The data come from the RNA Mapping Database (RMDB), library OK3TST.
Structure probing data (DMS and 2A3) for a 207-nucleotide construct.
The reactions ran in a buffer of 150 mM KOAc, 10 mM MgCl2 and 150 mM bicine (pH 8.5), at 24 C.
For 2A3, 2,569 sequencing reads were counted.
The DMS profile rests on 3,820 reads.
For 2A3 the reverse transcriptase was SuperScript II with manganese.

[RMDB]
RNA sequence: GGGAACGACUCGAGUAGAGUCGAAAAUAUGAGGAAUGGUAUCAAGAGGCGUUAAGGAAAUGGGAAGAUACCGCCGAAGCGUCAAUCCAGAAACUAGCGAGCGAUAUCGUCGGUGACUGGACAACGAAAGUUAGAACCGCCAACAACAUUGGAAAGAUCCACAUUAGAUUUUCGAAUCUAAUGUGGAAAAAGAAACAACAACAACAAC
Reactivity to DMS in 0.01 (KOAc 150mM, MgCl2 10mM, bicine 150mM(pH8.5), 24C), signal-to-noise 3, nucleotides 027 to 156: u020a050u000g000a150g000g040a070a050u000g030g000u000a090u000c100a120a080g000a140g010g000c070g060u000u000a060a190g010g000a030a110a070u000g000g000g000a120a130g010a120u000a030c050c030g030c020c030g000a150a100g030c010g010u000c060a080a120u000c020c000a030g000a070a170a080c020u000a080g000c000g000a050g020c010g010a180u000a150u000c000g000u000c050g020g040u000g010a300c000u000g000g000a030c050a030a100c030g000a050a080a000g010u000u010a090g020a070a110c060c010g000c010c030a060a060c040a060a070c040a300u000u030g000g010a030a080a120g010a210
Reactivity to 2A3 in 0.01 (KOAc 150mM, MgCl2 10mM, bicine 150mM(pH8.5), 24C), signal-to-noise 3, nucleotides 027 to 156: u170a040u060g020a040g040g030a040a050u120g010g000u100a070u120c050a050a060g020a050g110g000c020g050u090u050a070a030g000g040a040a080a090u140g000g020g010a020a080g050a080u070a040c010c010g010c010c010g030a030a010g020c000g000u020c020a020a030u000c000c000a000g000a020a020a000c010u030a010g010c010g000a010g020c100g070a060u050a040u230c030g110u020c060g010g010u010g000a010c010u010g000g010a010c020a040a000c020g130a060a020a000g030u030u020a040g010a050a040c030c020g000c030c000a000a000c020a020a010c000a030u070u120g000g030a060a060a020g090a040